[RMDB]
RNA sequence: GGGAACGACUCGAGUAGAGUCGAAAAGUCUGUUUUUAUUUCAAGCUGCUUGUGGUAAAUUCAUGGAUGCAUCGCAUAGAAUAUUUAAUGAACAACGAGUUCAAAAAUCACAUCUUUACUGCGAGGCCAUUACCCAGCUAUUCGUAGCUGGGUAAUGAAAAGAAACAACAACAACAAC
Reactivity to DMS in 0.01 (KOAc 150mM, MgCl2 10mM, bicine 150mM(pH8.5), 24C), signal-to-noise 4, nucleotides 027 to 126: g000u010c090u010g000u020u010u010u000u020a070u020u020u000c040a020a080g000c070u030g010c050u010u010g000u010g010g000u000a010a020a020u020u020c160a070u040g000g000a090u010g020c020a070u030c070g030c040a040u020a070g000a060a060u030a030u020u000u000a110a150u000g010a030a010c020a090a150c300g000a130g010u010u000c010a020a050a080a030a040u010c150a070c090a030u000c060u000u010u010a040c100u000g000c000g000a030g010g000c040
Reactivity to 2A3 in 0.01 (KOAc 150mM, MgCl2 10mM, bicine 150mM(pH8.5), 24C), signal-to-noise 7, nucleotides 027 to 126: g020u010c030u040g020u020u010u000u030u060a190u030u070u050c050a050a020g020c060u160g020c010u130u040g020u040g030g030u040a020a050a070u120u100c050a040u070g080g030a020u030g010c030a070u060c060g000c050a030u060a100g060a070a030u090a090u140u080u110a160a150u040g020a000a000c010a060a110c180g140a080g050u000u020c010a010a010a030a050a050u100c070a060c020a110u020c020u030u090u060a060c030u010g020c000g010a000g010g030c000
This 177-nucleotide RNA was probed chemically with DMS and 2A3. For DMS, 7,614 sequencing reads were counted. 2A3 adducts were read by reverse transcription with SuperScript II with manganese. Reactivities are given for positions 27 through 126. The RNA was probed in 150 mM KOAc, 10 mM MgCl2 and 150 mM bicine (pH 8.5) at 24 C. It was measured as part of the RMDB library OK1LIB. The 2A3 profile rests on 5,754 reads.